[RMDB]
Conditions: 150 mM KOAc, 10 mM MgCl2 and 150 mM bicine (pH 8.5), 24 C. An RNA of 177 nucleotides, treated with DMS and 2A3 and read out base by base. High DMS reactivity at an A or C suggests that its Watson-Crick edge is free.
RNA sequence: GGGAACGACUCGAGUAGAGUCGAAAACAAAGUCUGUUCGCAGACUUUGAAACCUGAUAUAAUCGUCAGGAAAGGUGAUUACACCUUCUUAAGCAGAUUAUUAAAGGACGCCGUUCGCGGCGUCCAACGUGUCAUUGAAGUUCGCUUCAAUGACACGAAAAGAAACAACAACAACAAC
Reactivity to DMS in 0.01 (KOAc 150mM, MgCl2 10mM, bicine 150mM(pH8.5), 24C), signal-to-noise 1, nucleotides 027 to 126: c000a000a010a000g000u000c000u000g010u000u000c190g010c020a020g010a000c000u010u020u020g000a080a110a150c010c010u000g010a070u000a070u000a040a010u000c000g010u020c050a060g000g000a030a010a040g000g020u000g000a300u040u030a090c020a040c000c000u010u010c010u000u010a130a150g060c090a080g000a000u010u000a020u000u000a070a030a110g010g000a010c000g030c000c000g030u000u010c150g000c000g010g020c000g000u000c000c000a010a010
Reactivity to 2A3 in 0.01 (KOAc 150mM, MgCl2 10mM, bicine 150mM(pH8.5), 24C), signal-to-noise 2, nucleotides 027 to 126: c000a000a010a000g000u000c000u000g010u040u090c170g030c120a000g000a000c000u010u000u010g010a040a010a010c000c010u010g020a000u010a000u020a230a040u010c010g070u040c020a000g010g000a100a070a000g010g000u040g020a220u260u300a160c010a020c000c000u000u000c030u030u060a090a000g000c020a070g020a010u010u030a000u000u100a090a130a060g010g010a000c000g000c010c000g040u050u020c270g010c010g080g010c000g000u040c000c000a010a000